[RMDB]
Conditions: 150 mM KOAc, 10 mM MgCl2 and 150 mM bicine (pH 8.5), 24 C. This 177-nucleotide RNA was probed chemically with DMS and 2A3. For DMS, 5,632 sequencing reads were counted. For 2A3 the reverse transcriptase was SuperScript II with manganese.
RNA sequence: GGGAACGACUCGAGUAGAGUCGAAAAGAAGAGCAGGCGGAUAAUCUUGUGCAGUAUGCAUGCUCGUAACUCCAGCGCACAAGUGGACGCACAAGAUUUGAAUCCAGCAUAGCGCAGGAGCCGCAGAAAAUUACUCCCUCUUCGGAGGGAGUAAUUUAAAAGAAACAACAACAACAAC
Reactivity to DMS in 0.01 (KOAc 150mM, MgCl2 10mM, bicine 150mM(pH8.5), 24C), signal-to-noise 3, nucleotides 027 to 126: g000a110a050g000a040g000c010a010g000g030c000g030g000a060u020a040a040u000c000u000u000g010u000g000c000a110g030u010a080u030g030c010a040u010g020c050u000c010g010u030a060a120c040u020c040c010a080g000c010g000c020a120c230a110a100g060u000g010g000a110c130g000c000a020c010a010a010g000a020u020u030u040g000a280a100u000c000c010a050g000c060a090u030a080g000c030g010c010a060g000g000a020g000c040c010g000c200a100g000a070
Reactivity to 2A3 in 0.01 (KOAc 150mM, MgCl2 10mM, bicine 150mM(pH8.5), 24C), signal-to-noise 2, nucleotides 027 to 126: g100a070a010g050a030g020c070a070g030g020c040g030g040a040u080a110a010u030c000u030u020g010u000g000c060a080g030u100a040u070g030c030a010u050g000c000u000c040g000u010a020a040c070u050c010c010a000g040c030g020c000a030c000a060a180g030u080g110g060a000c000g030c000a000c000a010a000g010a020u040u000u110g100a020a050u040c000c010a000g010c030a110u100a050g020c020g000c040a100g030g000a000g040c040c010g050c000a010g200a020